[RMDB]
Conditions: 150 mM KOAc, 10 mM MgCl2 and 150 mM bicine (pH 8.5), 24 C. An RNA of 207 nucleotides, treated with 2A3 and DMS and read out base by base.
RNA sequence: GGGAACGACUCGAGUAGAGUCGAAAAUGAUUAUGUCCCUGCCGUUUGUACACACCGCCCGUCGCUUGUAGUAACGAAUGGUCUGGUGAACCUUCUGGACUGCGACAGCAAUGUUGCGGAAAAAUAAGUAAACCCUACCAUUUGGAACAACAAGAAGGACUAAAAUAGCCUUCGGGCUAUUUUAGUCAAAAGAAACAACAACAACAAC
Reactivity to 2A3 in 0.01 (KOAc 150mM, MgCl2 10mM, bicine 150mM(pH8.5), 24C), signal-to-noise 2, nucleotides 027 to 156: u110g010a030u060u130a060u210g060u030c000c000c000u020g040c000c040g020u030u110u110g110u120a010c060a000c010a010c030c030g040c030c010c020g080u060c070g000c030u000u010g020u040a150g010u010a020a060c010g000a000a000u010g010g000u010c070u040g000g000u020g010a050a060c010c000u020u010c040u030g040g000a030c010u000g000c000g010a010c000a000g020c020a050a130u030g000u000u000g010c000g000g000a090a250a010a000a010u050a010a010g020u020a040a050a070c000c000c000u010a010c010c000a000u010u020u000g020g020a050a010c010a000a000c000a040a050g150a040a060g110
Reactivity to DMS in 0.01 (KOAc 150mM, MgCl2 10mM, bicine 150mM(pH8.5), 24C), signal-to-noise 1, nucleotides 027 to 156: u010g020a200u000u010a130u000g020u010c000c000c020u010g070c000c050g000u000u000u000g010u020a110c100a100c040a020c000c010g000c020c020c060g010u000c040g070c010u060u000g000u000a120g020u010a040a200c050g050a020a080u000g020g030u000c050u010g020g030u000g010a250a080c060c010u010u010c060u000g000g020a300c020u010g030c000g020a000c000a040g000c300a080a100u020g000u010u020g030c040g000g000a000a120a070a100a070u010a020a050g020u000a070a240a110c020c000c020u000a060c030c010a040u000u040u000g080g000a160a100c000a110a120c000a030a080g030a090a070g040
2A3 adducts were read by reverse transcription with SuperScript II with manganese.